[RMDB]
RNA sequence: GGGAACGACUCGAGUAGAGUCGAAAACUUACUUCUGCUGGAUUUCCGUCUGGGCAUUUCGAUUCCACAGGCUGAAUCCCACCUUGCCAUUGAGAUCCACACUCCUGGCGCCCAGAACUCGCCAGUGCCUCCCUGGGCCAUUCGUGGCCCAGGGAGGAAAAGAAACAACAACAACAAC
Reactivity to 2A3 in 0.01 (KOAc 150mM, MgCl2 10mM, bicine 150mM(pH8.5), 24C), signal-to-noise 1, nucleotides 027 to 126: c010u040u040a030c030u070u200c040u180g060c030u000g010g020a070u040u020u030c020c020g040u000c040u000g000g080g000c050a060u070u160u100c100g010a130u060u000c010c020a160c020a140g060g000c040u010g000a010a040u050c020c000c010a010c010c000u060u050g020c000c010a030u000u010g020a030g000a020u040c030c000a000c000a000c030u000c000c020u000g020g010c010g020c010c000c000a000g010a060a020c020u010c050g010c000c030a060g050u000g060
Chemical mapping of a 177-nucleotide RNA with 2A3.
Source: RMDB library OK1LIB, as collected in RNAgym.
The RNA was probed in 150 mM KOAc, 10 mM MgCl2 and 150 mM bicine (pH 8.5) at 24 C.